[RMDB]
RNA sequence: GGGAACGACUCGAGUAGAGUCGAAAAGAUAUGGAGCUCUACCCACCGAGAAACAACGAAGAACUCGGAAACGAGGGAGUUGUUGAACUCGAGGAGCUCCUAAGUCAAACCAGGGUUCGCCCUGGAACUAUCUUGCAAUCUUCGGAUUGCAAGAUAGAAAAGAAACAACAACAACAAC
Reactivity to 2A3 in 0.01 (KOAc 150mM, MgCl2 10mM, bicine 150mM(pH8.5), 24C), signal-to-noise 2, nucleotides 027 to 126: g080a040u190a160u260g000g020a000g000c000u000c010u060a220c020c030c000a030c000c000g000a010g010a030a070a000c010a030a010c030g180a300a190g010a080a040c010u010c000g000g020a070a050a030c010g000a000g040g000g000a030g000u000u030g010u020u030g000a110a060c000u020c040g020a050g030g000a000g000c000u010c000c000u010a020a010g020u030c050a090a060a170c000c000a010g050g010g000u070u160c300g150c040c000c010u010g000g000a000a000
Reactivity to DMS in 0.01 (KOAc 150mM, MgCl2 10mM, bicine 150mM(pH8.5), 24C), signal-to-noise 2, nucleotides 027 to 126: g000a110u010a160u010g010g020a030g010c010u000c000u010a140c040c000c010a300c130c020g000a020g000a150a040a000c010a010a020c030g000a110a160g000a120a200c010u020c000g000g010a040a080a260c030g000a070g020g000g000a120g010u000u000g010u000u030g020a090a090c000u010c000g000a200g010g000a020g020c010u000c010c010u000a000a080g010u000c080a110a170a140c000c000a010g010g000g010u030u020c250g000c010c010c010u020g000g000a030a120
Notes: This 177-nucleotide RNA was probed chemically with 2A3 and DMS. The DMS profile rests on 1,179 reads. The data come from the RNA Mapping Database (RMDB), library TTRDEL. The reactions ran in a buffer of 150 mM KOAc, 10 mM MgCl2 and 150 mM bicine (pH 8.5), at 24 C.